[RMDB]
RNA sequence: GGGAACGACUCGAGUAGAGUCGAAAACUUGCAAACUUCGGUUUGCAAGAAAGAACGCUGCGGCGAGCAGCAGCCAGAGAACGCAACACAAUCGCCAUAAAAAAAUCUAUGAGUUCGCUCAUAGAAACACAACGUAUGAGUUCGCUCAUACGUUGUGAAAAGAAACAACAACAACAAC
Reactivity to 2A3 in 0.01 (KOAc 150mM, MgCl2 10mM, bicine 150mM(pH8.5), 24C), signal-to-noise 1, nucleotides 027 to 126: c000u020u000g000c000a000a000a000c000u030u070c130g090g000u010u000u040g000c000a000a010g000a000a000a000g000a080a000c020g000c030u040g000c020g080g000c040g050a060g050c020a010g010c010a000g070c010c020a040g040a010g020a240a060c080g050c080a020a050c030a030c030a110a060u020c020g010c030c030a060u230a000a190a020a010a000a010a040u000c000u000a000u010g000a010g050u020u150c200g020c030u000c040a010u010a010g040a030a030a000
Reactivity to DMS in 0.01 (KOAc 150mM, MgCl2 10mM, bicine 150mM(pH8.5), 24C), signal-to-noise 1, nucleotides 027 to 126: c000u010u000g000c000a000a000a000c000u010u020c240g050g020u000u000u000g000c000a000a000g010a070a110a100g000a120a090c220g000c020u000g050c070g000g010c050g000a180g030c030a030g040c050a080g000c020c020a090g020a150g020a020a120c070g000c110a060a030c120a070c150a090a080u000c040g000c000c040a270u070a000a020a000a100a140a030a050u000c010u000a000u010g020a000g010u010u010c250g000c000u000c000a000u000a010g000a010a160a190